Conditions: 150 mM KOAc, 10 mM MgCl2 and 150 mM bicine (pH 8.5), 24 C.
The record gives the reactivity of an RNA of 177 nucleotides to DMS and 2A3.
[RMDB]
RNA sequence: GGGAACGACUCGAGUAGAGUCGAAAAAUCAUCAGAGAGUUUAUACUUCUGGUAAAAGGAUUUCAUAUCUAGGUAGAUUGGAUCCCUCAUCUUGAGCUCAACUACUAUAUGUCUGCCAUCCUUCAGCGAACCUAAACCUAUUCGUAGGUUUAGGUUCAAAAGAAACAACAACAACAAC
Reactivity to DMS in 0.01 (KOAc 150mM, MgCl2 10mM, bicine 150mM(pH8.5), 24C), signal-to-noise 4, nucleotides 027 to 126: a110u000c080a030u000c020a010g000a080g010a050g000u000u000u010a110u010a120c010u010u000c020u010g000g010u010a060a070a090a100g010g000a040u010u010u010c040a020u000a030u000c140u000a090g010g020u000a030g000a120u010u000g010g000a040u000c090c200c010u000c090a060u010c130u020u010g010a050g010c150u010c040a030a050c060u000a030c030u000a050u010a040u000g000u010c040u000g000c070c070a090u000c010c030u000u000c120a090g020c270
Reactivity to 2A3 in 0.01 (KOAc 150mM, MgCl2 10mM, bicine 150mM(pH8.5), 24C), signal-to-noise 2, nucleotides 027 to 126: a000u040c000a000u000c010a000g080a020g000a030g070u060u190u180a200u080a100c000u020u000c000u010g000g020u070a040a080a040a010g030g010a020u040u090u110c040a020u100a020u060c040u060a040g100g030u090a040g040a270u000u050g010g030a060u000c050c050c000u000c020a140u060c060u070u150g010a010g010c010u020c020a030a030c020u020a010c030u040a020u000a020u280g020u030c040u020g040c030c000a030u010c000c000u040u020c010a030g080c020